Notes: The data come from the RNA Mapping Database (RMDB), library OK3TST. This 207-nucleotide RNA was probed chemically with DMS and 2A3. For DMS the reverse transcriptase was MarathonRT. Values cover nucleotides 27 to 156. The RNA was probed in 150 mM KOAc, 10 mM MgCl2 and 150 mM bicine (pH 8.5) at 24 C.
[RMDB]
RNA sequence: GGGAACGACUCGAGUAGAGUCGAAAAGCAGGCUACGUUGAGUACCUCGUCGGUCAUGGUAAAGUCGCACAGUUUCAACCGCGAGUCGAAAAAGACGUUCGCGUAGAUUCCCAUGUCCUCCUCGCGGUGCUUGAGAUGUCGUUUAGCGUACCACGAGACGAUCAAUAACAUUCGUGUUAUUGAUCGUAAAAGAAACAACAACAACAAC
Reactivity to DMS in 0.01 (KOAc 150mM, MgCl2 10mM, bicine 150mM(pH8.5), 24C), signal-to-noise 2, nucleotides 027 to 156: g040c040a100g010g050c020u000a030c060g030u040u000g000a100g020u010a040c060c020u010c040g020u010c040g020g000u000c020a060u000g000g000u010a070a070a120g010u010c030g000c100a100c100a150g000u020u000u000c020a240a130c090c010g040c000g030a050g020u020c040g000a060a080a090a100a130g000a080c050g030u000u000c060g060c090g020u020a050g010a260u000u000c040c000c000a140u010g010u000c030c000u010c080c020u000c010g010c050g020g010u000g010c000u030u000g000a090g000a090u010g020u000c030g010u000u000u000a110g010c040g000u000a080c010c020a070c060g000a230g000
Reactivity to 2A3 in 0.01 (KOAc 150mM, MgCl2 10mM, bicine 150mM(pH8.5), 24C), signal-to-noise 3, nucleotides 027 to 156: g040c050a020g060g000c040u070a020c050g040u090u130g020a000g030u020a060c010c010u030c000g040u030c070g010g010u010c040a050u040g000g070u090a060a040a050g050u080c020g040c080a040c040a150g030u050u210u200c070a070a040c070c000g000c000g000a010g010u080c040g060a170a100a040a010a090g060a020c070g050u070u080c020g060c020g030u030a030g000a060u020u030c050c000c000a020u030g000u000c020c020u040c010c020u000c000g000c020g010g000u010g000c010u070u070g050a120g000a100u110g050u050c010g030u030u020u070a060g020c020g020u020a050c000c010a050c070g030a030g010